Chemical mapping of a 207-nucleotide RNA with DMS and 2A3. It was measured as part of the RMDB library M2RFPK.
RNA sequence: GGGAACGACUCGAGUAGAGUCGAAAAUUAAUGAAGAAAAUCUCCAAACGCCAACGAUGAGCGUUUCGCAAUCGCCGCUUAAGGCUUUUGCCGAGGCUGCUUGAGCCUUGUUACCAAAGAAAAGCCGAAAACCCAAAUGUCUUCGGACAUUUGGGAACCACAUUAUAUUGUUCGCAAUAUAAUGUGGAAAAGAAACAACAACAACAAC
Reactivity to DMS in 0.01 (KOAc 150mM, MgCl2 10mM, bicine 150mM(pH8.5), 24C), signal-to-noise 1, nucleotides 027 to 156: u000u010a060a110u020g000a050a050g010a050a090a100a170u000c020u030c000c020a060a040a040c020g030c030c020a060a090c090g000a120u010g000a150g020c000g010u000u000u000c080g030c020a080a050u010c080g010c020c080g010c190u020u020a150a190g000g020c000u000u000u000u030g010c010c020g010a040g030g040c000u000g000c080u000u000g010a050g030c000c030u000u020g000u020u050a220c070c070a100a100a140g020a130a080a040a040g040c020c070g010a060a080a050a230c020c020c010a000a070a030u000g000u000c000u000u000c300g000g010a000c000a020u000u010u000g010g030g000a020a000
Reactivity to 2A3 in 0.01 (KOAc 150mM, MgCl2 10mM, bicine 150mM(pH8.5), 24C), signal-to-noise 3, nucleotides 027 to 156: u100u070a010a090u160g040a030a190g060a050a170a050a120u060c070u050c040c020a050a060a000c020g010c010c010a100a060c150g190a230u170g020a070g050c010g000u010u040u120c020g000c000a030a030u030c020g000c020c000g070c140u200u210a110a070g000g000c000u000u010u000u020g000c000c010g010a000g010g000c030u080g010c020u050u030g000a000g000c000c000u010u020g050u120u130a060c010c010a010a040a000g030a020a080a010a000g010c000c030g060a040a070a040a060c000c000c010a000a000a000u000g000u000c000u020u050c130g080g000a000c000a000u000u010u000g000g000g000a000a000

For 2A3, 2,287 sequencing reads were counted. For DMS, 1,730 sequencing reads were counted. Reactivities are rounded to 0.1 and cut off at 0 and 3. 2A3 adducts were read by reverse transcription with SuperScript II with manganese. High 2A3 reactivity points to a flexible backbone, as in loops and unpaired stretches.